[RMDB]
RNA sequence: GGGAACGACUCGAGUAGAGUCGAAAAGGAAGACCACAAAAAUGUGAAUGCGGUAAAAGUGCAACUUGUUAUAGUAGCUCGCAAUCUGUUUAUGCUUGCUUCAAGCAUGCACUAGGAUGUGAUUAUUUAUAUAACCCUUACUGCAUUGACAUACAGCGACUCAAGCAAUGUUCGCAUUGCUUGAGUCAAAAGAAACAACAACAACAAC
Reactivity to 2A3 in 0.01 (KOAc 150mM, MgCl2 10mM, bicine 150mM(pH8.5), 24C), signal-to-noise 2, nucleotides 027 to 156: g060g040a010a090g040a010c050c030a040c060a060a140a030a010a000u040g000u040g060a010a000u000g000c020g000g020u030a030a040a030a040g010u070g030c030a070a050c050u010u070g070u030u120a110u040a240g140u060a020g030c030u030c000g000c020a040a220u040c090u170g140u080u250u060a030u100g000c000u020u010g010c000u070u160c040a010a000g010c110a090u030g000c000a010c030u080a100g050g030a060u060g050u060g040a020u020u120a010u010u290u050a090u000a030u010a070a080c000c020c000u020u010a000c000u020g000c000a010u000u010g020a000c040a030u120a050c030a040g120c000

An RNA of 207 nucleotides, treated with 2A3 and read out base by base. For 2A3, 793 sequencing reads were counted. Source: RMDB library OK3TST, as collected in RNAgym. Values cover nucleotides 27 to 156.